[RMDB]
The data come from the RNA Mapping Database (RMDB), library M2RFPK.
Chemical mapping of a 207-nucleotide RNA with 2A3 and DMS.
2A3 adducts were read by reverse transcription with SuperScript II with manganese.
The reactions ran in a buffer of 150 mM KOAc, 10 mM MgCl2 and 150 mM bicine (pH 8.5), at 24 C.
For 2A3, 3,064 sequencing reads were counted.
For DMS the reverse transcriptase was MarathonRT.
RNA sequence: GGGAACGACUCGAGUAGAGUCGAAAAGGUAUGAUUAGGGUGAGACCUAGGAACCGUAGGGGUAUUCUCAAAGGAAGCUUUUGCAGUGACGCCCAUGUAAGUGGGAUAUAACAACCGAACUCGUAUGUGUGGCACAGAGAGUUCGCUCUCUGUGCAAACUGUACACUAAGUUCGCUUAGUGUACAGUAAAAGAAACAACAACAACAAC
Reactivity to 2A3 in 0.01 (KOAc 150mM, MgCl2 10mM, bicine 150mM(pH8.5), 24C), signal-to-noise 3, nucleotides 027 to 156: g080g010u080a030u130g040a080u100u130a030g030g010g010u020g070a070g020a030c020c020u020a020g050g060a050a050c040c050g010u080a040g010g000g010g000u020a110u100u040c070u010c060a080a080a020g060g020a030a020g040c000u060u060u080u050g000c060a020g010u020g050a040c070g010c000c000c020a010u070g050u080a120a080g010u030g010g010g030a020u030a000u020a130a050c060a020a020c000c020g030a030a030c030u040c060g040u110a070u130g110u050g010u080g060g020c000a000c000a000g010a000g000a000g020u030u050c130g050c010u000c000u000c010u000g000u010g000c000a010a010
Reactivity to DMS in 0.01 (KOAc 150mM, MgCl2 10mM, bicine 150mM(pH8.5), 24C), signal-to-noise 3, nucleotides 027 to 156: g010g030u000a060u000g030a150u000u000a110g010g000g020u010g010a150g010a100c020c050u000a100g010g020a110a070c040c040g030u000a070g000g010g020g020u000a070u000u000c040u000c030a030a110a170g020g010a070a090g000c030u010u010u000u000g010c020a080g030u000g010a110c070g020c010c000c010a030u000g000u020a050a170g040u000g010g000g010a050u000a040u000a110a070c060a050a100c040c020g000a070a060c050u000c030g010u000a080u010g020u000g010u000g030g020c000a010c000a030g010a050g010a050g040u000u010c300g010c010u000c000u010c000u000g020u000g000c020a010a000